[RMDB]
RNA sequence: GGGAACGACUCGAGUAGAGUCGAAAAGCUUAAUAACCUGCGCUGAGCCCUUCUCCCCCAGCUUGCCUGUGUCCUAGGGAAUUGGAAGGUCAUCCUUCACAGGAUCGUGUGGAAGUCCUGUUCGGGGUCCAAACAUGGUAAUUCGUUACCAUGUUAAACUACACGUAUUGUUCGCAAUACGUGUAGUAAAAGAAACAACAACAACAAC
Reactivity to 2A3 in 0.01 (KOAc 150mM, MgCl2 10mM, bicine 150mM(pH8.5), 24C), signal-to-noise 3, nucleotides 027 to 156: g010c020u120u130a060a020u070a170a150c030c040u080g020c060g020c040u040g070a060g020c030c000c000u060u070c080u040c020c000c000c010c000a000g010c010u040u100g030c000c000u050g010u010g010u070c020c010u040a060g050g010g000a060a090u070u060g040g020a030a020g010g020u110c030a080u150c000c000u030u020c030a020c010a020g010g000a010u050c050g000u100g010u020g170g000a030a020g020u010c010c010u010g000u000u020c040g020g000g000g000u010c030c030a020a010a030c000a000u000g010g000u010a020a010u050u040c090g050u070u000a000c000c000a000u010g000u000u010a010a000
Reactivity to DMS in 0.01 (KOAc 150mM, MgCl2 10mM, bicine 150mM(pH8.5), 24C), signal-to-noise 3, nucleotides 027 to 156: g010c050u000u000a120a120u000a100a080c040c010u000g020c060g020c020u010g000a110g010c020c010c050u010u000c060u010c020c020c000c020c030a130g000c050u000u000g000c060c030u020g020u000g020u010c010c030u000a100g000g030g020a050a120u010u010g010g010a100a050g000g020u010c060a090u020c020c000u000u010c040a050c040a060g010g000a040u000c070g000u000g040u000g010g010a080a070g010u000c010c010u000g040u000u000c070g010g000g040g020u010c040c040a080a020a010c000a000u000g010g020u000a020a100u000u000c300g040u000u000a010c000c000a000u000g010u000u000a030a090

About this RNA: Conditions: 150 mM KOAc, 10 mM MgCl2 and 150 mM bicine (pH 8.5), 24 C. Structure probing data (2A3 and DMS) for a 207-nucleotide construct. For 2A3, 3,403 sequencing reads were counted. DMS adducts were read by reverse transcription with MarathonRT. It was measured as part of the RMDB library M2RFPK. For 2A3 the reverse transcriptase was SuperScript II with manganese.